[RMDB]
RNA sequence: GGGAACGACUCGAGUAGAGUCGAAAAACGCAUCAUACGUGAUGCGAGAACUACAGUUCCGCUCCUCUAGCACACAGAGGUUAAUUGGGUGCGACCCCCCCCUCUCCCGUGGGUCAACGGGAACCAAAAAAGACCCUUUAGUUCGCUAAAGGGUCAAGGUAUUGAUUAAGUUCGCUUAAUCAAUACCAAAAGAAACAACAACAACAAC
Reactivity to 2A3 in 0.01 (KOAc 150mM, MgCl2 10mM, bicine 150mM(pH8.5), 24C), signal-to-noise 2, nucleotides 027 to 156: a000c010g000c010a000u000c010a010u040a100c220g110u040g030a010u020g010c040g000a050g040a010a030c110u260a090c070a100g020u010u010c000c010g030c050u050c010c000u000c000u030a040g010c010a010c000a000c010a010g020a000g000g030u040u040a020a020u090u060g090g000g010u010g010c010g120a170c000c000c000c000c000c000c000c000u050c010u010c000c000c000g000u010g000g010g030u120c050a000a010c000g000g000g010a000a000c010c010a000a040a030a050a040a020g000a010c000c000c010u020u000u000a030g010u040u070c210g010c120u000a000a000a000g000g000g000u000c000a000a000
Reactivity to DMS in 0.01 (KOAc 150mM, MgCl2 10mM, bicine 150mM(pH8.5), 24C), signal-to-noise 1, nucleotides 027 to 156: a130c030g030c000a010u010c010a080u020a160c300g040u020g040a010u010g020c000g000a080g000a100a090c060u000a110c100a140g000u000u000c010c020g010c050u020c000c010u000c080u000a100g020c030a060c030a040c050a050g000a050g000g000u000u000a020a110u000u000g020g000g030u000g030c060g000a300c000c000c000c000c000c000c000c000u000c060u010c010c000c000g020u010g000g020g010u010c100a070a040c010g000g000g000a040a050c100c080a010a020a060a120a060a140g000a020c000c000c000u000u010u000a030g040u000u020c220g050c020u000a010a010a040g000g010g030u000c000a000a000
Record summary:
The data come from the RNA Mapping Database (RMDB), library M2RFPK. Structure probing data (2A3 and DMS) for a 207-nucleotide construct. The 2A3 profile rests on 4,444 reads. The DMS profile rests on 2,819 reads.